[RMDB]
RNA sequence: GGGAACGACUCGAGUAGAGUCGAAAAUACAGUUGAAGGUAAACAAAACUGGGGUCUAGUUUAGGCGAAAAGAACGUUUUACAAAACUCCAAACCACCGGAUGUGCCUCUGAAAACAUGUGCCUGGACUAAGUUGAUGUUUUCGAACAUCAACUUAGAAAAGAAACAACAACAACAAC
Reactivity to DMS in 0.01 (KOAc 150mM, MgCl2 10mM, bicine 150mM(pH8.5), 24C), signal-to-noise 6, nucleotides 027 to 126: u030a060c120a080g010u000u000g010a130a090g010g030u010a040a080a090c050a090a060a100a050c150u000g000g000g010g010u000c040u010a250g000u000u020u010a030g040g010c020g000a110a090a120a100g010a100a080c060g010u000u010u010u020a080c070a020a040a190a050c050u010c020c050a030a050a110c070c030a060c080c020g000g020a040u010g020u000g000c020c010u000c040u010g000a070a050a060a080c140a060u020g010u000g010c240c010u000g000g000a300
Reactivity to 2A3 in 0.01 (KOAc 150mM, MgCl2 10mM, bicine 150mM(pH8.5), 24C), signal-to-noise 6, nucleotides 027 to 126: u150a010c030a010g040u030u020g160a100a030g060g020u090a100a080a020c040a020a120a020a020c050u030g000g000g000g000u000c020u050a040g010u030u050u080a040g010g030c030g020a070a060a080a090g110a110a040c030g010u010u010u050u040a030c030a000a050a010a010c010u000c000c000a070a050a090c040c020a050c000c020g040g000a040u040g020u050g050c010c000u000c020u070g060a040a050a050a020c060a060u100g000u040g030c000c010u010g020g010a020